[RMDB]
RNA sequence: GGGAACGACUCGAGUAGAGUCGAAAAGGCAUGACGUACUUGCUCCGCUAAUCGCGAGACUCUCCAGUGAAGGUAUUUCCACUGGAUGGACAUAGAUUUCAACCGCUCGGUUUCUCAUAGCCCUCGAUGUACUUGAGGACUUCGGUCCUCAAGUACAAAAAGAAACAACAACAACAAC
Reactivity to DMS in 0.01 (KOAc 150mM, MgCl2 10mM, bicine 150mM(pH8.5), 24C), signal-to-noise 1, nucleotides 027 to 126: g000g020c100a060u020g010a100c070g000u060a050c100u000u000g000c030u010c000c050g000c020u030a030a050u010c120g040c080g030a040g030a070c020u020c130u000c010c010a030g000u000g000a130a060g000g030u030a100u120u010u000c110c010a000c020u020g000g030a040u040g050g000a000c080a050u040a060g000a120u000u070u000c040a120a190c030c080g000c020u000c100g000g010u000u000u020c010u000c060a080u000a180g000c000c000c000u000c030g010a140
Reactivity to 2A3 in 0.01 (KOAc 150mM, MgCl2 10mM, bicine 150mM(pH8.5), 24C), signal-to-noise 4, nucleotides 027 to 126: g060g010c040a010u040g020a080c090g050u090a090c010u070u090g000c010u040c020c000g000c080u060a120a140u170c040g000c030g010a040g060a120c010u000c000u000c040c000a000g000u020g090a120a020g130g040u210a220u090u130u030c040c000a010c010u010g000g030a060u060g060g000a010c010a060u100a060g120a110u050u110u080c050a070a050c010c000g000c010u020c050g060g010u030u050u040c050u040c020a100u080a060g030c020c020c000u010c050g090a070